Chemical mapping of a 177-nucleotide RNA with 2A3.
The reactions ran in a buffer of 150 mM KOAc, 10 mM MgCl2 and 150 mM bicine (pH 8.5), at 24 C.
The 2A3 profile rests on 291 reads.
[RMDB]
RNA sequence: GGGAACGACUCGAGUAGAGUCGAAAACAAACAAACUAUUUGAAGAUGAUAGUCAUGGAUUUACCCAUUUAAUUAUAUCUGCUUUCCGCCGCUUUUUGAAAAGAUCAAAUACUUUAAAAACAACAAACGACAGUGUUGCGUUCGCGCAACACUGUCGAAAAGAAACAACAACAACAAC
Reactivity to 2A3 in 0.01 (KOAc 150mM, MgCl2 10mM, bicine 150mM(pH8.5), 24C), signal-to-noise 1, nucleotides 027 to 126: c000a000a210a000c000a000a100a000c030u020a050u000u000u220g250a110a000g000a140u290g000a000u000a210g020u030c210a080u080g060g220a140u010u010u010a050c090c000c000a000u040u070u030a000a300u200u070a000u020a080u070c000u050g000c000u130u000u000c000c000g000c000c000g070c060u000u000u000u000u040g030a260a260a000a000g020a100u050c000a030a030a030u110a080c000u120u220u300a130a000a000a000a000c050a000a000c000a050a000a170